[RMDB]
RNA sequence: GGGAACGACUCGAGUAGAGUCGAAAACCGGGCUUCGGCCCGGACCAUUGGGGUCCACUACCCACCCGACCUGCAUCGAUCGUAACUGAAGCCUCCACGGUUACGGGAGUUGGUCGGAGGUGGACGGAGGCACCCGCUUUACCUAAUUCGUUAGGAAUACUAGUAGAUUGUUCGCAAUCUACUAGUAAAAAGAAACAACAACAACAAC
Reactivity to 2A3 in 0.01 (KOAc 150mM, MgCl2 10mM, bicine 150mM(pH8.5), 24C), signal-to-noise 3, nucleotides 027 to 156: c000c000g020g000g000c040u110u090c280g150g000c020c000c000g000g000a020c000c010a020u020u070g010g000g000g020u020c020c010a030c060u110a090c010c000c000a000c000c000c000g000a000c000c010u050g000c020a110u300c100g000a000u000c000g000u000a000a000c000u010g020a090a020g020c000c000u000c000c020a000c010g040g010u000u010a000c000g000g010g000a030g000u030u040g010g000u000c000g000g010a030g030g020u010g000g030a090c110g000g000a010g000g020c000a030c020c020c010g010c020u140u160u180a130c000c000u040a040a130u200u180c110g080u110u060a010g070g000a030a120
Reactivity to DMS in 0.01 (KOAc 150mM, MgCl2 10mM, bicine 150mM(pH8.5), 24C), signal-to-noise 2, nucleotides 027 to 156: c000c000g000g020g020c000u000u040c220g050g040c010c000c020g020g000a040c020c030a210u010u010g010g000g000g000u000c020c040a100c060u000a120c050c000c010a060c020c010c020g000a030c010c000u030g000c060a300u000c150g010a200u000c010g010u000a010a000c000u010g000a060a200g000c030c000u000c000c000a300c020g000g000u010u000a010c000g010g010g020a080g020u000u010g000g010u000c010g020g000a030g000g000u000g020g000a090c050g000g020a040g130g040c020a080c040c020c010g050c130u010u000u000a200c040c000u000a080a090u000u000c070g010u010u000a030g000g000a260a300

The record gives the reactivity of an RNA of 207 nucleotides to 2A3 and DMS. DMS adducts were read by reverse transcription with MarathonRT. The RNA was probed in 150 mM KOAc, 10 mM MgCl2 and 150 mM bicine (pH 8.5) at 24 C. As a SHAPE reagent, 2A3 marks flexible, mostly unpaired nucleotides at the ribose 2'-OH. DMS (dimethyl sulfate) methylates the pairing face of unpaired adenines and cytosines. 2A3 adducts were read by reverse transcription with SuperScript II with manganese. Reactivities are rounded to 0.1 and cut off at 0 and 3.